[RMDB]
RNA sequence: GGGAACGACUCGAGUAGAGUCGAAAAGAAAGAAAGAAAGCGGUUGGGUGGGUCCAUCGACCGUCGUGGCGUAUUCGGACGCUUUACCACGACGCGAGGACAUAGCGAGACCGACCACCCCCUUUAACAGAGGUAUAGUAGUUCGCUACUAUACCAAGAUACGUAGAUCGUUCGCGAUCUACGUAUCAAAAGAAACAACAACAACAAC
Reactivity to 2A3 in 0.01 (KOAc 150mM, MgCl2 10mM, bicine 150mM(pH8.5), 24C), signal-to-noise 3, nucleotides 027 to 156: g060a030a040a010g070a020a060a010g080a040a130a020g090c140g040g080u150u120g050g030g020u030g020g060g000u010c060c000a160u190c020g040a060c060c000g000u000c000g000u010g010g000c070g010u120a100u080u180c090g060g020a010c030g000c010u060u090u090a020c000c000a000c010g000a010c000g000c000g000a000g000g010a010c010a040u050a030g030c030g010a030g080a080c000c040g020a020c000c010a010c000c000c000c000c000u050u110u020a130a060c100a040g060a060g140g000u000a000u000a010g000u000a000g000u010u060c200g030c080u000a000c000u000a000u000a000c000c000a000a000
Reactivity to DMS in 0.01 (KOAc 150mM, MgCl2 10mM, bicine 150mM(pH8.5), 24C), signal-to-noise 2, nucleotides 027 to 156: g000a140a090a060g020a160a100a120g000a100a090a150g020c120g010g000u000u000g000g000g040u000g000g010g010u000c000c020a100u000c110g000a040c180c010g020u000c000g070u000g000g000c020g020u000a100u000u010c050g020g000a170c060g000c140u000u010u000a040c010c010a020c010g000a010c000g010c020g010a130g000g000a030c040a100u000a050g000c080g000a250g000a170c020c020g010a100c000c000a040c000c000c010c010c000u000u000u030a080a230c080a180g000a200g000g050u000a010u000a010g020u000a020g020u000u010c300g030c000u000a010c000u000a020u000a000c000c000a000a050
The record gives the reactivity of an RNA of 207 nucleotides to 2A3 and DMS. Reactivities are given for positions 27 through 156. For DMS the reverse transcriptase was MarathonRT.